[RMDB]
RNA sequence: GGGAACGACUCGAGUAGAGUCGAAAAGAUAUGGAUACGGACAUGCGAUCUAUCGGAAACGAUAGGUUCGCAACAGCCGUCAUCCUAAGUCAAAAGGUGUACUUUAAGUUCGCUUAAAGUACACCAACUAUAAUAUAGACUUCGGUCUAUAUUAUAGAAAAGAAACAACAACAACAAC
Reactivity to 2A3 in 0.01 (KOAc 150mM, MgCl2 10mM, bicine 150mM(pH8.5), 24C), signal-to-noise 3, nucleotides 027 to 126: g000a010u080a020u160g000g000a000u000a010c010g010g040a040c080a150u060g000c010g000a000u010c010u000a000u000c010g030g010a110a050a050c020g020a000u010a010g000g050u050u180c010g000c000a020a000c030a010g060c000c010g020u010c020a000u000c000c000u020a110a030g080u050c050a000a020a040a210g000g010u000g000u010a000c010u000u000u020a010a010g030u030u140c300g050c130u010u000a000a000a000g010u000a000c000a000c000c000a000a000
Reactivity to DMS in 0.01 (KOAc 150mM, MgCl2 10mM, bicine 150mM(pH8.5), 24C), signal-to-noise 5, nucleotides 027 to 126: g000a020u000a300u010g010g000a020u000a010c010g010g020a050c060a240u000g000c010g020a010u000c000u000a000u000c000g010g000a080a100a100c000g000a010u000a010g000g010u010u010c010g010c000a010a030c290a180g000c010c000g000u000c180a000u000c000c000u010a050a130g000u010c040a070a060a110a110g000g010u000g010u000a000c000u000u000u000a000a000g010u000u010c190g000c000u000u000a000a000a010g010u000a000c000a000c000c000a010a020